[RMDB]
RNA sequence: GGGAACGACUCGAGUAGAGUCGAAAAAUUCUCCCAAGAAGGUCCAAGAGAACUUUCAAGAAGGAGGAUUUUUCCCCAAGACGCUGGUGGACUCUUGGAAUGGGAAAGAGGAGGGCGGAAAAAGAGGAACGUUCAGCGUUCGCGCUGAACAAAAGAAACAACAACAACAAC
Reactivity to 2A3 in 0.01 (KOAc 150mM, MgCl2 10mM, bicine 150mM(pH8.5), 24C), signal-to-noise 6, nucleotides 027 to 129: a010u030u000c000u010c010c000c000a020a040g020a000a000g040g000u040c040c070a130a040g080a010g010a150a040c010u010u010u020c050a040a030g100a030a060g030g010a000g010g020a010u020u010u000u010u010c010c000c000c000a030a060g050a020c070g030c090u060g020g020u060g060g020a030c000u010c000u070u080g040g030a080a050u120g060g010g020a050a050a030g040a020g040g010a010g000g010g000c010g040g000a050a030a000a020a010g060a030g010g020a090a000c060
Reactivity to DMS in 0.01 (KOAc 150mM, MgCl2 10mM, bicine 150mM(pH8.5), 24C), signal-to-noise 4, nucleotides 027 to 129: a000u030u040c040u020c000c000c000a130a070g000a030a010g030g050u030c010c010a180a170g050a160g020a090a020c010u020u010u020c020a100a070g030a130a060g030g020a020g020g000a050u010u010u000u080u030c030c010c010c150a090a070g010a040c000g060c050u050g030g050u000g030g020a090c060u030c040u000u000g000g040a100a080u050g050g030g020a030a020a040g020a050g020g040a020g000g000g000c090g010g080a050a050a090a080a080g010a060g030g030a040a040c130

An RNA of 170 nucleotides, treated with 2A3 and DMS and read out base by base. For 2A3 the reverse transcriptase was SuperScript II with manganese. DMS adducts were read by reverse transcription with MarathonRT. Reactivities are given for positions 27 through 129.